RNA sequence: GGGAACGACUCGAGUAGAGUCGAAAAGCUCUAAUUACAUUGUUAAUUGAGAUAACACCUAUAUUAUCCAAGUAUUUAAUUACUUGGUAUCUAAAGACCCUUAAGAAAAGACCAGUCUGAGGCUGUAACUUUUGGUCUCGUUCGCGAGACCAAAAGUAAAAGAAACAACAACAACAAC
Reactivity to 2A3 in 0.01 (KOAc 150mM, MgCl2 10mM, bicine 150mM(pH8.5), 24C), signal-to-noise 1, nucleotides 027 to 126: g070c000u000c000u030a000a000u090u000a070c140a300u240u300g050u180u000a000a000u000u020g030a000g050a070u140a070a030c000a100c020c050u030a000u000a000u300u100a000u240c000c030a000a000g000u000a030u000u160u250a290a300u120u000a000c000u000u000g000g000u000a000u110c050u000a030a030a030g030a070c000c240c000u090u130a060a060g120a050a050a100a000g090a020c050c080a000g000u000c000u090g010a040g000g020c000u000g000u240a030

The data come from the RNA Mapping Database (RMDB), library OK1LIB. Chemical mapping of a 177-nucleotide RNA with 2A3.